[RMDB]
RNA sequence: GGGAACGACUCGAGUAGAGUCGAAAAGUGUGUACUCUCUCGAACUCGUGUUCGAGUGUUCGUGAGUGAGAGAUCGUGUUCACGUACGAACGAGAACUCUCGUGAGUACACUCACGAACGAGAGAACGUGUUCUCGUGAACACGAACGUGUGAGAGAACAUACUGUCUGGUUCGCCAGACAGUAUGUAAAAGAAACAACAACAACAAC
Reactivity to DMS in 0.01 (KOAc 150mM, MgCl2 10mM, bicine 150mM(pH8.5), 24C), signal-to-noise 2, nucleotides 027 to 156: g010u020g010u000g030u000a060c000u000c010u000c020u000c030g010a040a040c010u000c070g070u010g020u020u000c000g020a110g020u020g020u010u010c030g020u000g020a080g020u000g030a140g020a080g010a100u000c050g000u000g020u010u010c000a110c110g060u000a120c140g000a040a020c010g000a070g000a060a250c080u000c030u000c000g030u010g020a280g030u000a190c110a100c080u000c060a030c030g000a120a020c000g000a080g000a040g000a050a200c080g000u000g010u010u000c020u030c050g000u010g010a010a000c000a040c010g010a010a050c080g000u000g040u010g010a080g010a170g040a080
Reactivity to 2A3 in 0.01 (KOAc 150mM, MgCl2 10mM, bicine 150mM(pH8.5), 24C), signal-to-noise 7, nucleotides 027 to 156: g110u090g000u020g030u160a080c000u000c000u000c010u010c020g030a050a010c020u000c030g050u050g080u090u080c040g030a050g050u110g030u010u020c020g000u030g030a020g000u050g030a070g000a000g010a080u040c020g000u030g050u130u050c020a010c040g050u160a060c120g060a060a000c000g010a020g020a180a090c040u020c010u000c070g030u080g030a020g030u090a060c040a050c080u030c010a000c010g010a030a000c020g000a010g000a000g000a070a040c050g150u170g040u100u010c010u000c010g020u030g000a000a000c000a010c000g000a030a020c020g050u120g010u100g040a030g000a000g010a040
Source information: An RNA of 207 nucleotides, treated with DMS and 2A3 and read out base by base. The data come from the RNA Mapping Database (RMDB), library OK3TST. The reactions ran in a buffer of 150 mM KOAc, 10 mM MgCl2 and 150 mM bicine (pH 8.5), at 24 C. The 2A3 profile rests on 6,222 reads. For DMS the reverse transcriptase was MarathonRT. Values are in units of 0.01, from 0 to 300, in steps of 10.